Chemical mapping of a 177-nucleotide RNA with 2A3 and DMS. The RNA was probed in 150 mM KOAc, 10 mM MgCl2 and 150 mM bicine (pH 8.5) at 24 C. 2A3 adducts were read by reverse transcription with SuperScript II with manganese.
RNA sequence: GGGAACGACUCGAGUAGAGUCGAAAAUGCUCGGCCGACGCGCCGUAGCCGGCCGCCUCGAAGCUCCCUUCCUAACGGGCGGCGGGCUGAAUCCUUUGCAGACGACUUAAAACGCGACGGGGCAUUGGUGAAUUUAGAUGUUCGCAUCUAAAUUCACAAAAGAAACAACAACAACAAC
Reactivity to 2A3 in 0.01 (KOAc 150mM, MgCl2 10mM, bicine 150mM(pH8.5), 24C), signal-to-noise 4, nucleotides 027 to 126: u070g010c020u010c030g070g000c010c050g110a130c040g080c020g000c020c000g030u010a000g000c000c010g200g000c000c000g000c000c000u140c060g040a040a010g020c020u070c020c000c000u040u070c040c010u070a110a040c030g000g000g000c000g000g010c020g010g010g000c010u010g040a010a060u060c010c010u050u050u110g010c030a030g030a110c050g010a040c040u120u210a030a060a070a020c040g000c000g030a040c020g010g000g000g000c010a030u030u110g100
Reactivity to DMS in 0.01 (KOAc 150mM, MgCl2 10mM, bicine 150mM(pH8.5), 24C), signal-to-noise 3, nucleotides 027 to 126: u010g020c030u010c030g000g040c020c020g010a090c080g000c040g020c080c040g000u010a010g010c000c000g000g020c000c000g010c020c030u010c060g010a200a090g000c090u020c050c030c030u000u000c070c080u020a080a240c290g000g010g000c040g000g000c000g010g000g030c020u020g000a090a060u010c020c040u000u020u020g010c060a070g000a090c020g000a050c070u010u020a050a030a090a100c080g010c010g010a060c080g000g000g000g010c030a050u030u000g010